[RMDB]
RNA sequence: GGGAACGACUCGAGUAGAGUCGAAAAAGCACUGGUACGAUACGUCGUACCACUGCAGUCGUUGGGAUGGAACGCAAUUAAAUACAUGUGUGACGUGUAUUUGCGAACGACGUAAUUAUUUUUCAAAAUCACGCUAUCGUGUUCGCACGAUAGCGAAGUCCGAGAAGGAGUUCGCUCCUUCUCGGACAAAAGAAACAACAACAACAAC
Reactivity to 2A3 in 0.01 (KOAc 150mM, MgCl2 10mM, bicine 150mM(pH8.5), 24C), signal-to-noise 2, nucleotides 027 to 156: a000g020c010a000c020u040g000g000u000a000c000g000a010u040a140c290g110u030c000g030u000a000c000c000a000c020u000g000c000a040g000u040c040g020u040u080g140g000g090a180u020g010g040a110a000c010g020c000a000a010u110u160a150a060a000u020a000c000a010u020g050u050g180u210g180a180c030g010u020g000u020a000u000u080u050g000c000g010a000a010c010g000a010c030g080u010a090a120u190u140a100u000u200u030u000u100c080a010a040a050a140u180c060a010c060g000c000u000a010u000c010g000u000g030u030u000c060g050c150a000c000g000a010u000a000g000c000g000a000a000

About this RNA:
The data come from the RNA Mapping Database (RMDB), library M2RFPK. Chemical mapping of a 207-nucleotide RNA with 2A3. Reactivities are given for positions 27 through 156.